[RMDB]
RNA sequence: GGGAACGACUCGAGUAGAGUCGAAAAAGCAAAGAAGUACCGUGAGGGAAAACUGAAAAGCAACCCGGAAGGGCUGUAAAAAGAGCCUGAAACCAAGCAGUGAAAACUUUAUAGGGCACUAAAGGAAGACUUGGUAAAAGUUCGCUUUUACCAAGUCAAAAGAAACAACAACAACAAC
Reactivity to DMS in 0.01 (KOAc 150mM, MgCl2 10mM, bicine 150mM(pH8.5), 24C), signal-to-noise 2, nucleotides 027 to 126: a040g000c060a000a090a080g020a090a050g020u000a090c010c060g020u030g030a140g000g000g000a120a070a190a060c050u020g000a080a080a060a120g000c020a100a110c010c020c020g000g050a200a060g000g000g010c020u000g000u020a080a050a080a070a070g020a030g010c000c010u000g000a110a130a080c100c060a040a070g000c020a020g000u020g000a040a030a050a090c020u040u000u020a070u060a070g010g000g020c020a050c070u000a010a080a040g010g000a110a090
Reactivity to 2A3 in 0.01 (KOAc 150mM, MgCl2 10mM, bicine 150mM(pH8.5), 24C), signal-to-noise 2, nucleotides 027 to 126: a000g090c080a050a070a030g040a050a000g110u050a030c000c070g050u100g120a150g000g020g000a030a030a020a070c040u040g040a060a060a020a000g000c020a020a010c000c000c000g030g000a050a030g020g030g030c000u010g010u120a050a060a050a050a010g100a000g030c000c000u020g000a070a000a000c010c010a030a000g060c020a000g030u050g080a010a000a000a090c010u050u090u070a300u190a170g010g060g030c020a070c070u100a070a000a040g040g000a070a080